[RMDB]
RNA sequence: GGGAACGACUCGAGUAGAGUCGAAAACUGGCAUUGGGAGGAGGGCAUGAUAAUCCCUAACAUCCACACAGGGACAACAGCACUUGGAGGCAGAUGUGCUUCUCACUUCAAGGAAACUGAGGCAGAGAUUCCUCACGUUAUUCGUAACGUGAGGAAUAAAAGAAACAACAACAACAAC
Reactivity to DMS in 0.01 (KOAc 150mM, MgCl2 10mM, bicine 150mM(pH8.5), 24C), signal-to-noise 5, nucleotides 027 to 126: c070u010g000g020c070a100u000u000g010g000g020a090g010g000a100g000g010g010c100a070u000g000a080u000a100a210u020c000c000c000u000a110a150c120a090u000c040c060a080c120a090c180a050g000g000g000a050c110a060a100c080a040g010c100a090c040u010u020g010g010a060g000g000c140a030g000a060u000g010u000g020c080u000u000c020u010c110a140c040u000u010c060a040a030g000g000a090a070a110c090u000g010a080g020g020c070a080g000a140g000
Reactivity to 2A3 in 0.01 (KOAc 150mM, MgCl2 10mM, bicine 150mM(pH8.5), 24C), signal-to-noise 3, nucleotides 027 to 126: c020u020g030g040c050a140u050u130g020g040g000a050g010g040a050g000g020g010c010a030u060g020a030u120a120a050u100c000c010c000u020a090a020c040a110u060c030c020a070c030a030c040a050g000g010g010a010c020a080a020c030a110g020c020a020c060u030u040g020g020a040g040g000c030a020g050a150u110g050u070g090c000u080u000c010u010c010a040c010u030u060c030a050a030g060g020a070a060a020c050u050g010a010g050g000c030a000g050a010g000